Structure probing data (DMS and 2A3) for a 207-nucleotide construct.
RNA sequence: GGGAACGACUCGAGUAGAGUCGAAAAACAAUGGUACCAUUUCUACUGCUGAUUGGUCUGAACCCAUUCUGCUUGAACCUGCUGAAUAUGUAAAACCAAAGAACAAUGGUAAUGUCAUUGUUAUUGCAGGUUAUACAUUUUAUAAAGAUGAGGAUGACGUGAAAGUAUUAUUCGUAAUACUUUCACGAAAAGAAACAACAACAACAAC
Reactivity to DMS in 0.01 (KOAc 150mM, MgCl2 10mM, bicine 150mM(pH8.5), 24C), signal-to-noise 5, nucleotides 027 to 156: a060c060a070a100u000g020g030u000a100c050c040a130u000u000u000c040u010a100c110u010g020c070u000g010a100u000u000g010g010u000c040u010g000a100a150c170c010c010a130u000u000c040u000g010c030u000u000g000a090a130c010c030u000g020c060u010g000a080a070u000a040u000g020u000a030a050a040a050c010c020a050a040a060g010a020a040c030a020a020u000g010g010u000a070a120u010g010u000c010a020u000u000g020u000u000a040u000u000g010c030a170g030g010u000u000a160u000a040c010a030u000u000u000u010a140u000a140a090a080g000a110u000g010a080g010g010a130u000g020a200
Reactivity to 2A3 in 0.01 (KOAc 150mM, MgCl2 10mM, bicine 150mM(pH8.5), 24C), signal-to-noise 8, nucleotides 027 to 156: a000c060a030a080u110g060g010u070a040c000c020a060u030u080u060c050u080a150c090u100g100c040u060g020a060u040u020g020g030u020c070u130g060a080a070c010c010c000a010u060u030c030u050g050c020u030u080g040a040a040c000c020u020g010c020u040g080a080a030u080a060u150g040u080a000a010a030a080c030c020a060a040a080g070a040a010c000a000a010u010g020g040u150a140a070u160g080u120c000a000u010u000g010u010u020a050u050u110g050c070a030g000g000u000u000a000u000a000c000a000u030u060u070u060a170u060a060a110a040g060a040u100g020a030g100g030a060u070g050a020

The reactions ran in a buffer of 150 mM KOAc, 10 mM MgCl2 and 150 mM bicine (pH 8.5), at 24 C. For DMS, 12,435 sequencing reads were counted. For 2A3, 7,784 sequencing reads were counted. 2A3 adducts were read by reverse transcription with SuperScript II with manganese.